[RMDB]
RNA sequence: GGGAACGACUCGAGUAGAGUCGAAAAGAUAUGGAAUCCUGAGCUUUUGACGUAUCAGUCGGAAACGACUGUAAGCGAUAAGCUCUGGAUUCCUAAGUCAAAAGUUUACGUCUUCGGACGUAAACAAGUCAUAUUCUAGGUUCGCCUAGAAUAUGACAAAAGAAACAACAACAACAAC
Reactivity to DMS in 0.01 (KOAc 150mM, MgCl2 10mM, bicine 150mM(pH8.5), 24C), signal-to-noise 5, nucleotides 027 to 126: g000a010u010a140u010g000g000a020a010u000c000c000u000g000a010g020c000u000u000u000u000g010a170c030g010u000a140u000c000a000g010u000c000g010g000a040a030a070c000g010a010c000u000g010u000a040a180g010c010g020a090u000a040a030g010c000u000c000u000g000g000a010u000u000c000c000u000a010a070g000u010c010a110a090a110a120g000u000u000u000a000c000g000u000c000u000u010c190g020g010a010c000g000u000a000a000a000c000a070a070
Reactivity to 2A3 in 0.01 (KOAc 150mM, MgCl2 10mM, bicine 150mM(pH8.5), 24C), signal-to-noise 6, nucleotides 027 to 126: g000a010u020a010u050g000g000a000a000u000c000c010u020g010a010g020c020u220u300u300u300g250a060c000g000u020a020u070c000a000g000u000c000g000g000a020a020a010c010g000a010c000u010g030u050a130a080g010c000g100a120u060a300a040g000c000u000c000u000g000g000a000u000u000c000c000u000a000a000g010u010c010a060a020a050a130g000u000u000u010a000c000g010u000c000u010u060c300g150g000a010c000g000u010a000a000a000c000a000a000